[RMDB]
The record gives the reactivity of an RNA of 177 nucleotides to 2A3 and DMS. For DMS, 4,314 sequencing reads were counted. The 2A3 profile rests on 2,954 reads. The RNA was probed in 150 mM KOAc, 10 mM MgCl2 and 150 mM bicine (pH 8.5) at 24 C.
RNA sequence: GGGAACGACUCGAGUAGAGUCGAAAAUGAUUCAUGACUGGGGUGAAGUCGUAACAAGGUAACCGUAGGGGAAACCUGCGGUUGGAUCACCUCCUUACCUUAAAGAAGCGUACUUUGAAGUGCUCACCCUAUUUAGGCUCUUCGGAGCCUAAAUAGGAAAAGAAACAACAACAACAAC
Reactivity to 2A3 in 0.01 (KOAc 150mM, MgCl2 10mM, bicine 150mM(pH8.5), 24C), signal-to-noise 5, nucleotides 027 to 126: u130g030a050u060u070c060a050u220g060a050c030u080g000g030g020g020u050g040a050a010g020u040c060g080u090a030a110c070a060a010g030g000u020a000a000c000c000g010u020a020g010g040g020g130a160a160a190c000c000u000g000c000g000g000u000u010g000g000a020u040c020a030c000c020u060c010c010u040u080a070c000c010u030u050a160a150a020g110a080a000g070c020g070u040a050c030u090u140u220g130a150a040g020u060g050c000u010c000a080c000
Reactivity to DMS in 0.01 (KOAc 150mM, MgCl2 10mM, bicine 150mM(pH8.5), 24C), signal-to-noise 3, nucleotides 027 to 126: u030g010a040u030u020c050a100u040g000a030c040u000g000g000g010g020u020g000a100a020g000u020c020g020u010a070a100c130a090a010g010g020u000a030a010c000c020g010u010a020g010g010g010g010a090a110a240c000c000u000g010c030g000g000u000u000g020g000a090u000c070a120c100c110u000c030c000u000u000a020c070c060u000u010a060a060a100g000a060a060g000c060g000u000a040c030u000u000u020g030a090a130g000u000g010c050u000c020a020c050